[RMDB]
RNA sequence: GGGAACGACUCGAGUAGAGUCGAAAAUGGAGGGAGGCCAGAGCCACUGAGUUUCCCUCAGUGGAUGAAAAAGCCAAGUGGUUGAGAGGAACUGCACCCCACUCCUCUCCACAAAGGAGUCAGACUCCCUGACCCAUGCAGCUUAGAGGGUGCACUACGAAAAUAGUAGUUUCGACUACUAUUUUCGAAAAGAAACAACAACAACAAC
Reactivity to DMS in 0.01 (KOAc 150mM, MgCl2 10mM, bicine 150mM(pH8.5), 24C), signal-to-noise 3, nucleotides 027 to 156: u000g020g020a080g000g030g020a090g050g000c050c020a180g000a190g020c010c000a040c010u020g000a080g020u000u000u020c190c260c010u000c020a010g030u000g000g020a060u000g000a050a040a080a130a070g010c020c030a120a300g020u010g000g030u020u000g010a090g000a120g030g000a000a080c060u010g000c020a100c000c000c000c010a140c040u000c020c000u000c030u010c010c040a040c050a080a130a120g010g020a060g010u000c050a140g000a290c030u000c000c010c020u010g000a150c000c010c030a200u020g000c050a080g000c060u000u010a080g010a280g030g060g040u000g030c010a040c090u000a260
Reactivity to 2A3 in 0.01 (KOAc 150mM, MgCl2 10mM, bicine 150mM(pH8.5), 24C), signal-to-noise 6, nucleotides 027 to 156: u130g040g010a040g040g000g000a010g030g060c050c030a050g040a010g100c010c000a010c010u000g000a010g030u060u140u110c030c020c000u020c000a000g010u010g000g020a050u110g040a070a070a010a030a030g070c040c020a120a040g060u050g090g050u140u120g030a030g000a000g000g010a030a020c080u170g000c010a020c010c000c000c010a020c010u000c000c010u000c000u000c000c010a010c020a010a160a050g050g020a080g060u080c030a000g040a160c010u020c020c030c000u020g020a030c010c000c010a020u130g040c030a050g030c050u150u150a030g030a140g070g000g000u010g010c010a010c030u090a040